[RMDB]
RNA sequence: GGGAACGACUCGAGUAGAGUCGAAAAGAUAUGGAUACUUGACAUGAAUAGUGUCGGAAACGACACGGGUUCAACAGCAAGGUCCUAAGUCAAAAGAUCCAGUAUUGCUUCGGCAAUACUGGAUCAAGUAUGAUAAGCACUUCGGUGCUUAUCAUACAAAAGAAACAACAACAACAAC
Reactivity to DMS in 0.01 (KOAc 150mM, MgCl2 10mM, bicine 150mM(pH8.5), 24C), signal-to-noise 5, nucleotides 027 to 126: g010a030u000a300u010g000g000a020u000a080c000u000u020g000a080c080a230u000g010a010a010u000a220g010u000g010u000c000g010g000a110a060a180c010g020a010c000a000c000g000g020g000u010u000c010a030a090c250a130g000c010a020a010g000g000u010c000c000u000a070a120g000u000c030a100a060a160a110g000a010u000c000c000a010g000u000a000u000u000g010c000u000u010c200g030g010c000a020a000u000a000c000u000g010g010a000u000c000a000a040
Reactivity to 2A3 in 0.01 (KOAc 150mM, MgCl2 10mM, bicine 150mM(pH8.5), 24C), signal-to-noise 3, nucleotides 027 to 126: g020a020u070a030u140g000g020a040u240a300c010u030u020g040a080c020a160u060g020a020a020u040a070g000u000g000u000c000g000g000a080a070a020c010g000a010c000a010c000g070g210g020u060u020c050a100a060c020a100g060c000a000a000g000g010u000c000c010u020a120a030g060u050c030a040a030a000a220g000a000u000c000c000a000g000u000a000u000u010g000c000u050u090c240g090g000c000a000a000u000a010c000u000g000g000a000u000c000a000a000